[RMDB]
RNA sequence: GGGAACGACUCGAGUAGAGUCGAAAAGAGGCGAAAUAAUUCCCAUCUCCUGUGUACGGCCGGAGAUGGGUAUGGCCGUACUAAUAAGCCUCAUAGUGACGAGAGUCACGAAUUCUGGAUAGCCUAUGGUAGUCGGCUAUCCUGUGACUACCGUAGACACCAUAUACCCUUUCGAGGGUAUAUGGUGAAAAGAAACAACAACAACAAC
Reactivity to DMS in 0.01 (KOAc 150mM, MgCl2 10mM, bicine 150mM(pH8.5), 24C), signal-to-noise 2, nucleotides 027 to 156: g000a040g000g020c010g030a120a130a110u010a080a160u000u000c010c000c000a080u000c000u000c010c000u000g020u020g040u000a070c050g030g040c010c050g000g010a050g010a060u010g010g020g020u000a000u000g000g060c030c060g000u010a230c030u010a050a130u010a060a250g010c010c040u010c010a100u000a190g000u000g010a040c020g010a240g000a260g030u010c000a020c010g010a050a070u000u000c090u000g020g020a100u000a020g020c020c000u000a130u000g020g040u010a080g030u000c150g000g030c010u000a040u000c060c010u010g010u010g020a030c020u000a020c000c000g020u000a040g020a260
Reactivity to 2A3 in 0.01 (KOAc 150mM, MgCl2 10mM, bicine 150mM(pH8.5), 24C), signal-to-noise 4, nucleotides 027 to 156: g000a000g000g000c020g070a080a050a030u170a040a060u140u070c010c000c000a010u010c030u010c000c010u050g010u020g040u110a090c040g090g020c000c020g000g000a020g010a020u030g020g000g020u010a020u040g020g010c020c020g010u010a010c000u030a020a140u060a080a000g010c000c000u040c020a060u110a070g090u100g040a000c020g040a020g000a010g180u010c010a000c020g020a030a060u190u090c040u080g010g000a010u010a010g010c030c010u060a050u050g120g040u050a080g070u080c040g020g000c010u010a010u020c010c000u000g030u030g000a030c040u070a100c030c000g010u010a030g020a060
Overview:
The data come from the RNA Mapping Database (RMDB), library OK3TST. This 207-nucleotide RNA was probed chemically with DMS and 2A3. For 2A3 the reverse transcriptase was SuperScript II with manganese. For DMS the reverse transcriptase was MarathonRT. High 2A3 reactivity points to a flexible backbone, as in loops and unpaired stretches. For 2A3, 4,159 sequencing reads were counted.